[RMDB]
RNA sequence: GGGAACGACUCGAGUAGAGUCGAAAAUGGUGUUAAGUGGAAUAAGUGGAAAAAUAUACAUAUAUGUACAGGGGGCUACAUAUAUGUAUAUGCCCCCUUGUUUCAGUAUAAGUAGGUAUAAGGUGGAACUGGAUAGGUAUUUCGAUACCUAUCCAGUAAAAGAAACAACAACAACAAC
Reactivity to 2A3 in 0.01 (KOAc 150mM, MgCl2 10mM, bicine 150mM(pH8.5), 24C), signal-to-noise 2, nucleotides 027 to 126: u120g040g020u060g060u100u130a150a090g070u020g040g020a020a030u000a020a000g030u140g030g020a060a120a000a090a000u010a000u000a010c000a000u030a000u000a000u010g020u020a000c120a140g090g020g000g030g040c010u010a010c010a000u010a010u000a000u010g000u010a010u000a000u000g000c000c000c000c000c000u000u000g000u000u000u000c000a000g020u010a040u010a140a040g070u090a010g070g040u070a100u010a150a060g070g040u080g090g010a080
Reactivity to DMS in 0.01 (KOAc 150mM, MgCl2 10mM, bicine 150mM(pH8.5), 24C), signal-to-noise 3, nucleotides 027 to 126: u010g000g000u010g020u000u010a050a080g010u010g000g000a020a010u010a010a020g000u010g010g000a020a040a050a070a030u000a020u000a020c000a010u000a010u010a000u000g000u000a010c140a150g010g010g000g010g010c190u000a010c010a000u000a020u010a000u000g000u000a010u000a000u000g010c300c040c010c030c000u000u010g000u000u000u000c010a040g000u040a050u010a040a080g000u010a040g000g010u000a050u020a050a100g020g010u000g000g020a120
Overview:
The record gives the reactivity of an RNA of 177 nucleotides to 2A3 and DMS. For 2A3 the reverse transcriptase was SuperScript II with manganese. For DMS the reverse transcriptase was MarathonRT. The RNA was probed in 150 mM KOAc, 10 mM MgCl2 and 150 mM bicine (pH 8.5) at 24 C. Source: RMDB library OK1LIB, as collected in RNAgym.